An RNA of 177 nucleotides, treated with DMS and 2A3 and read out base by base. DMS adducts were read by reverse transcription with MarathonRT. Conditions: 150 mM KOAc, 10 mM MgCl2 and 150 mM bicine (pH 8.5), 24 C.
[RMDB]
RNA sequence: GGGAACGACUCGAGUAGAGUCGAAAAGAUAUGGAUCCUGAACUACAAGAGGUAUGUCGGAAACGACAUACGCUUGCAGGAGUCCUAAGUCAAAACUCGUCUUGUCCGUUCGCGGACAAGACGAGAACUCACCGUAUGUGUUCGCACAUACGGUGAGAAAAGAAACAACAACAACAAC
Reactivity to DMS in 0.01 (KOAc 150mM, MgCl2 10mM, bicine 150mM(pH8.5), 24C), signal-to-noise 2, nucleotides 027 to 126: g020a050u000a300u000g010g030a300u010c000c000u000g000a100a040c090u000a300c020a000a010g000a080g000g040u000a000u010g020u000c000g000g070a060a100a220c010g030a030c000a000u000a010c000g010c000u010u000g000c010a020g000g010a030g040u000c010c000u010a080a160g020u010c030a090a060a070a090c000u000c000g000u000c010u010u000g000u000c000c000g020u010u030c220g070c020g010g000a020c000a000a000g010a010c000g020a020g030a020a040
Reactivity to 2A3 in 0.01 (KOAc 150mM, MgCl2 10mM, bicine 150mM(pH8.5), 24C), signal-to-noise 2, nucleotides 027 to 126: g060a020u080a050u170g030g000a010u010c000c000u020g050a040a100c110u160a050c300a020a020g010a010g100g110u000a000u010g000u000c010g000g050a100a100a070c000g000a000c000a000u010a000c010g000c000u020u000g000c010a020g010g050a020g240u080c000c000u020a090a040g030u080c030a010a000a070a230c000u000c010g000u010c010u020u010g010u000c010c010g090u070u120c300g000c000g120g000a020c000a000a000g000a000c000g000a000g000a000a000